[RMDB]
RNA sequence: GGGAACGACUCGAGUAGAGUCGAAAAGAAAGCGAGACGAGAAGAGAAAAUUUGAGUCUGAAAUCACUGAUGCGAAAGUGAAGUGAUCGCAUGAACACUAAGACUCAGAGAUCUGAUCGUAAUCGCAGGGAUUAUCUUAGUUCGCUAAGAUAAUCCCAAAAGAAACAACAACAACAAC
Reactivity to 2A3 in 0.01 (KOAc 150mM, MgCl2 10mM, bicine 150mM(pH8.5), 24C), signal-to-noise 9, nucleotides 027 to 126: g080a020a080a010g010c000g000a000g010a020c000g000a000g020a060a000g040a000g050a040a160a120a140u040u030u000g000a000g000u010c010u010g030a110a100a020u020c010a020c040u020g020a040u090g030c030g040a070a060a050g130u160g150a090a030g100u080g130a140u010c010g020c070a050u080g060a100a020c030a010c110u020a030a000g000a000c000u000c000a000g010a000g010a070u000c000u010g000a020u000c000g000u030a090a160u010c000g010c010a000
Reactivity to DMS in 0.01 (KOAc 150mM, MgCl2 10mM, bicine 150mM(pH8.5), 24C), signal-to-noise 4, nucleotides 027 to 126: g000a060a150a090g020c020g000a010g010a010c000g010a000g000a300a030g000a030g000a070a070a130a220u000u000u000g000a010g000u000c000u000g010a090a200a070u000c010a010c050u020g000a140u020g000c090g020a000a100a120g010u010g010a090a110g010u010g000a120u000c050g010c180a000u020g000a050a040c150a040c040u000a250a010g000a000c000u010c000a000g010a030g000a100u000c000u000g010a130u000c000g000u010a030a090u000c010g030c020a080